Source information
Structure probing data (2A3 and DMS) for a 177-nucleotide construct. Conditions: 150 mM KOAc, 10 mM MgCl2 and 150 mM bicine (pH 8.5), 24 C. Reactivities are given for positions 27 through 126. For 2A3 the reverse transcriptase was SuperScript II with manganese.
[RMDB]
RNA sequence: GGGAACGACUCGAGUAGAGUCGAAAAGAUAUGGAUGGUUGCUCCGAUAAGCCUGUGUCGGAAACGACACGAGGCUUUUGACGGAGUAACCAUCCUAAGUCAAAGCAGCUAACUUCGGUUAGCUGCACCCAGUAACUCUCUUCGGAGAGUUACUGGGAAAAGAAACAACAACAACAAC
Reactivity to 2A3 in 0.01 (KOAc 150mM, MgCl2 10mM, bicine 150mM(pH8.5), 24C), signal-to-noise 1, nucleotides 027 to 126: g010a010u020a020u060g020g010a010u010g040g000u000u000g000c000u040c010c030g060a270u130a300a010g040c020c000u010g010u000g030u000c000g000g000a020a030a010c010g010a010c010a010c040g030a040g000g000c100u010u000u000u090g080a060c020g000g020a000g000u000a000a000c000c010a010u000c000c010u000a010a000g020u000c010a100a050a000g000c010a000g020c000u010a000a020c010u090u190c300g130g000u020u000a010g000c010u000g000c000a030
Reactivity to DMS in 0.01 (KOAc 150mM, MgCl2 10mM, bicine 150mM(pH8.5), 24C), signal-to-noise 1, nucleotides 027 to 126: g010a020u000a080u010g000g000a010u000g000g020u010u000g020c000u010c000c010g020a100u010a010a010g040c010c000u010g010u010g000u000c000g010g020a010a020a070c000g010a030c010a000c010g030a010g020g020c000u000u000u010u000g010a270c110g010g000a010g010u000a010a010c000c000a000u010c010c000u000a000a060g010u000c010a170a140a180g020c000a010g000c000u000a000a000c000u000u020c200g030g010u000u000a000g000c000u000g010c000a000